[RMDB]
RNA sequence: GGGAACGACUCGAGUAGAGUCGAAAAUUCGGGACGGGACACUAGCAUGGUGGAGUCUUCAACGGCAUCAGCGGCAGCCGUAUUGCGGGCCCGCUACCCACGCACAGCCGCCAGCCUUGACCGCUACGUAAUGAUCCUCGUUCGCGAGGAUCAUUACAAAAGAAACAACAACAACAAC
Reactivity to 2A3 in 0.01 (KOAc 150mM, MgCl2 10mM, bicine 150mM(pH8.5), 24C), signal-to-noise 3, nucleotides 027 to 126: u090u020c010g010g010g040a010c050g000g050g030a030c040a020c100u080a060g040c020a090u160g020g000u060g020g040a110g030u040c000u050u010c020a070a080c020g000g000c010a050u030c090a110g000c020g030g020c000a010g000c010c000g030u050a180u010u190g070c010g000g040g030c000c030c000g000c010u060a060c000c010c000a020c050g020c000a070c010a030g010c030c000g020c000c000a030g010c000c000u070u110g060a100c010c020g000c010u040a040c040
Reactivity to DMS in 0.01 (KOAc 150mM, MgCl2 10mM, bicine 150mM(pH8.5), 24C), signal-to-noise 2, nucleotides 027 to 126: u040u030c050g000g000g010a080c190g040g010g000a120c110a020c050u000a130g010c110a040u010g010g010u000g010g040a150g020u000c040u000u000c080a170a050c010g000g000c010a140u020c130a010g000c010g040g000c040a230g000c020c010g020u050a050u000u000g000c100g000g000g040c030c000c010g010c010u000a010c010c040c000a140c030g000c140a070c060a130g000c000c000g000c000c050a030g030c050c060u000u010g000a030c020c020g000c040u020a070c100